Conditions: 150 mM KOAc, 10 mM MgCl2 and 150 mM bicine (pH 8.5), 24 C.
An RNA of 177 nucleotides, treated with DMS and read out base by base.
RNA sequence: GGGAACGACUCGAGUAGAGUCGAAAAUCAGUAAUAUCGCCAGUCACAGAUUAUCAAGUAGAUCUCAACAGAGUGCCCUGGCAAGCAUACUCUUUUAUCAACUUGGUUUUUAGCAAGCUCCACAAAGCUUAAAAACAACCUUCGGGUUGUUUUUAAGAAAAGAAACAACAACAACAAC
Reactivity to DMS in 0.01 (KOAc 150mM, MgCl2 10mM, bicine 150mM(pH8.5), 24C), signal-to-noise 1, nucleotides 027 to 126: u010c020a080g000u010a060a100u010a110u000c030g000c030c010a050g010u010c060a140c090a090g010a090u000u000a060u000c010a020a080g000u000a030g000a020u010c160u010c080a080a070c150a050g000a130g020u000g000c040c080c030u010g020g000c060a080a150g010c030a070u000a070c010u000c020u000u000u000u010a060u000c030a080a040c020u010u000g010g000u000u000u000u000u000a140g010c060a040a000g010c060u010c010c000a060c190a120a060a130g010